[RMDB]
RNA sequence: GGGAACGACUCGAGUAGAGUCGAAAAAAAUGAGCAUUCCCGGGCAGGACAGACCAGCCAGCUGGCUGUCCAUCAGGCUGGGCUGGAAGGACCUUGGAGAGACACUGCCCACUGGGGUCAAGGGGCACUCUAUAGUCUACUUCGGUAGACUAUAGAGAAAAGAAACAACAACAACAAC
Reactivity to 2A3 in 0.01 (KOAc 150mM, MgCl2 10mM, bicine 150mM(pH8.5), 24C), signal-to-noise 2, nucleotides 027 to 126: a000a000a040u220g010a010g050c030a020u030u050c000c020c020g000g030g010c020a020g000g020a050c000a010g050a130c000c000a000g050c020c000a010g100c040u000g030g010c030u090g060u060c030c000a000u030c020a010g010g000c040u050g040g040g060c000u030g000g050a070a010g090g010a080c010c030u050u090g070g020a120g010a020g000a020c000a020c130u030g000c000c020c000a030c040u040g050g000g040g020u020c040a030a010g000g010g000g000c020a020
Reactivity to DMS in 0.01 (KOAc 150mM, MgCl2 10mM, bicine 150mM(pH8.5), 24C), signal-to-noise 3, nucleotides 027 to 126: a030a040a060u010g010a080g010c060a200u000u000c020c030c010g000g010g010c040a080g000g000a080c040a050g000a080c000c010a000g000c040c070a110g010c060u000g000g030c130u000g000u000c020c010a030u000c080a110g010g010c050u000g010g010g000c030u000g010g010a100a070g010g000a060c070c030u000u000g000g010a070g000a150g000a100c110a060c060u000g010c000c010c010a100c120u000g010g020g010g010u010c040a070a070g010g010g000g020c170a130